[RMDB]
RNA sequence: GGGAACGACUCGAGUAGAGUCGAAAACUGCGCGUGUUGCAGGAGGGUGGGUGAUGGUCUCGAUCUCUUGUAUUUAGAGAUGGGUUGCCCUUGGUUAGGCAGGUCGUGGAUACUCUGGGGGCGCGUGCGAUAUAUAAAAUUUCGAUUUUAUAUAUCGAAAAGAAACAACAACAACAAC
Reactivity to DMS in 0.01 (KOAc 150mM, MgCl2 10mM, bicine 150mM(pH8.5), 24C), signal-to-noise 4, nucleotides 027 to 126: c040u020g010c020g000c080g030u000g020u030u020g010c060a110g000g010a090g000g000g030u030g000g010g020u010g000a090u020g010g000u010c040u010c030g000a030u000c010u000c010u010u000g020u020a060u040u030u010a010g000a020g010a010u010g000g000g000u020u030g020c020c010c060u030u010g010g020u030u050a120g010g010c040a070g000g000u020c070g000u020g000g000a110u020a050c070u010c040u010g000g000g000g000g000c020g000c040g000u010g000
Reactivity to 2A3 in 0.01 (KOAc 150mM, MgCl2 10mM, bicine 150mM(pH8.5), 24C), signal-to-noise 7, nucleotides 027 to 126: c010u020g000c010g000c020g030u100g040u090u160g020c020a010g020g050a050g010g010g050u210g020g020g010u070g040a080u070g050g050u020c020u010c030g040a030u000c010u010c000u020u060g090u230a210u100u210u100a020g000a000g000a010u030g060g010g000u030u140g010c000c000c000u060u090g150g010u170u120a070g020g020c030a010g020g040u050c020g050u080g020g010a010u020a040c010u000c010u050g010g000g000g000g000c010g000c000g000u010g010